[RMDB]
RNA sequence: GGGAACGACUCGAGUAGAGUCGAAAAGAUCUGCGCCGAUCCGAAACGCUAGCAAACAGCCCGCAUCAUGUCGUCUCCUAACUUCGACGUGGUGAAAUACUGAGCUAAUGCGAGUAAGCCUGUUAGCAAUAGAUCAGAACGUUCGCGUUCUGAUCAACUCACUUUAGCGAUUCGUCGCUAAAGUGAGAAAAGAAACAACAACAACAAC
Reactivity to 2A3 in 0.01 (KOAc 150mM, MgCl2 10mM, bicine 150mM(pH8.5), 24C), signal-to-noise 4, nucleotides 027 to 156: g020a070u040c010u060g050c050g010c060c050g050a030u020c010c030g050a040a030a040c050g000c040u040a010g000c030a140a050a040c020a030g010c040c030c010g000c010a000u010c010a000u010g000u010c000g020u000c040u090c060c120u140a200a240c080u050u040c010g010a010c010g010u000g000g000u020g010a020a020a000u150a030c030u020g030a020g010c010u060a110a020u090g010c010g010a030g090u070a040a020g030c020c030u060g010u070u080a020g000c010a050a120u060a240g000a000u000c000a000g000a000a000c010g020u030u050c180g020c000g100u000u000c040u000g010a000u000c000a000a000
Reactivity to DMS in 0.01 (KOAc 150mM, MgCl2 10mM, bicine 150mM(pH8.5), 24C), signal-to-noise 1, nucleotides 027 to 156: g010a120u000c000u000g010c040g010c000c020g040a140u020c020c000g000a050a120a070c070g000c050u000a070g000c040a080a030a200c100a170g020c000c030c070g000c010a060u010c000a060u020g040u000c070g030u010c060u000c190c040u010a080a090c090u000u000c020g030a040c020g030u010g000g000u000g020a040a100a100u020a190c120u000g000a060g020c000u020a000a210u000g030c000g000a020g020u000a080a190g010c030c010u000g030u000u000a120g030c020a060a160u000a100g050a000u000c020a030g010a000a000c000g050u000u000c300g100c050g030u010u000c010u000g020a000u000c000a000a030